This 177-nucleotide RNA was probed chemically with 2A3 and DMS. Conditions: 150 mM KOAc, 10 mM MgCl2 and 150 mM bicine (pH 8.5), 24 C. It was measured as part of the RMDB library OK2TST.
[RMDB]
RNA sequence: GGGAACGACUCGAGUAGAGUCGAAAAUUCAUAACUUAUUGCACUUAACGCAUACAAUGGCGCAGUUUCUGCCCGUAAAAUUCUCGGUCCAAGACCAACAACUGUACUAGUAUUACUAAAUAAUGAAAAAACGAAUUUAAUUCGUUAAAUUCGUUUUAAAAGAAACAACAACAACAAC
Reactivity to 2A3 in 0.01 (KOAc 150mM, MgCl2 10mM, bicine 150mM(pH8.5), 24C), signal-to-noise 4, nucleotides 027 to 126: u070u030c040a050u100a230a090c040u160u160a090u170u120g010c020a030c070u150u140a140a020c110g000c030a010u050a110c060a110a170u130g000g050c040g020c030a020g010u030u110u000c040u030g000c020c020c010g050u060a040a030a040a140u120u030c060u000c060g010g000u000c020c040a080a040g030a050c060c010a010a060c020a020a060c050u050g020u080a040c010u060a020g090u050a040u220u030a020c010u070a030a130a210u280a140a100u200g040a170a070
Reactivity to DMS in 0.01 (KOAc 150mM, MgCl2 10mM, bicine 150mM(pH8.5), 24C), signal-to-noise 4, nucleotides 027 to 126: u020u010c040a030u020a100a150c080u010u010a090u010u010g020c020a070c100u010u010a110a110c150g000c040a050u000a080c150a070a070u000g010g000c100g000c040a040g010u000u000u010c040u000g020c080c010c050g020u000a030a050a070a110u020u000c070u000c050g020g000u000c040c070a060a100g010a110c130c050a070a060c110a060a060c060u010g010u000a040c070u000a030g010u010a070u000u000a080c030u000a040a050a080u020a050a080u020g010a010a040

For 2A3, 2,960 sequencing reads were counted.